[RMDB]
Structure probing data (2A3 and DMS) for a 177-nucleotide construct. The data come from the RNA Mapping Database (RMDB), library OK2TRN.
RNA sequence: GGGAACGACUCGAGUAGAGUCGAAAAGGUUUAGAACGUCGUGAGACAGUUCGGUCCCUAUCCGCCGCGCGCGUAGGAAACUUGAGAAAGGCUGUCCCUAGUACGAGAGGACCGGGAUGGACGAACCGAAUCUCUAGGAGUUCGCUCCUAGAGAUUCAAAAGAAACAACAACAACAAC
Reactivity to 2A3 in 0.01 (KOAc 150mM, MgCl2 10mM, bicine 150mM(pH8.5), 24C), signal-to-noise 2, nucleotides 027 to 126: g070g010u060u130u250a070g020a040a010c010g000u000c040g010u130g110a140g010a010c140a100g000u010u070c030g010g080u090c020c000c010u010a060u020c030c010g010c030c040g140c040g000c000g000c000g050u000a020g000g070a050a060a020c010u020u140g020a040g070a170a060a050g040g000c000u020g000u000c000c010c000u010a010g010u040a030c030g020a020g020a040g110g020a020c050c030g000g000g000a000u000g000g060a010c030g020a010a010c060c030
Reactivity to DMS in 0.01 (KOAc 150mM, MgCl2 10mM, bicine 150mM(pH8.5), 24C), signal-to-noise 4, nucleotides 027 to 126: g010g010u010u000u020a100g000a020a040c030g020u000c010g000u000g010a280g000a020c000a090g050u000u000c000g020g010u000c070c000c020u000a090u010c130c030g020c030c090g010c160g020c080g030c130g020u000a080g010g010a100a050a060c040u010u000g010a130g000a120a100a110g010g020c020u000g010u000c020c010c010u010a070g010u000a080c040g000a240g000a220g010g000a080c250c170g000g000g010a040u000g010g000a060c030g010a090a100c150c060